[RMDB]
Structure probing data (DMS and 2A3) for a 177-nucleotide construct. The data come from the RNA Mapping Database (RMDB), library RFM100. The DMS profile rests on 1,249 reads.

RNA sequence: GGGAACGACUCGAGUAGAGUCGAAAACCUACCCUUGGCCAGGUUGAAGCAUGGGUAAAACCAUGUGGAGGACCGAACAGGUGAACGUUGAAAAGUUCUCUGAUGAGCUGAGGGUAGGAGUGAAAGGCUGCCAGUGUAGCUUCGGCUACACUGGCAGAAAAGAAACAACAACAACAAC
Reactivity to DMS in 0.01 (KOAc 150mM, MgCl2 10mM, bicine 150mM(pH8.5), 24C), signal-to-noise 1, nucleotides 027 to 126: c000c000u010a010c000c000c010u020u020g080g030c000c000a300g020g000u000u000g020a300a150g000c010a000u000g000g000g000u000a120a090a060a150c000c000a000u000g000u000g020g000a290g020g060a000c000c000g030a300a300c020a000g000g030u030g000a000a000c000g000u000u000g040a030a040a090a100g040u000u010c000u000c010u010g000a030u000g030a000g000c000u000g000a000g000g000g020u000a000g000g040a030g030u000g010a090a040a120g000g000
Reactivity to 2A3 in 0.01 (KOAc 150mM, MgCl2 10mM, bicine 150mM(pH8.5), 24C), signal-to-noise 1, nucleotides 027 to 126: c000c000u000a000c000c000c000u000u050g000g050c000c040a010g000g050u000u000g050a000a000g010c000a000u010g000g000g050u050a000a000a000a070c030c020a000u000g020u060g000g080a040g120g130a000c000c020g010a100a010c000a020g100g000u080g000a000a000c000g010u010u110g140a150a180a030a000g000u000u000c020u030c000u000g110a140u090g050a030g000c000u000g010a000g000g000g000u000a000g000g000a030g000u010g040a120a060a000g100g010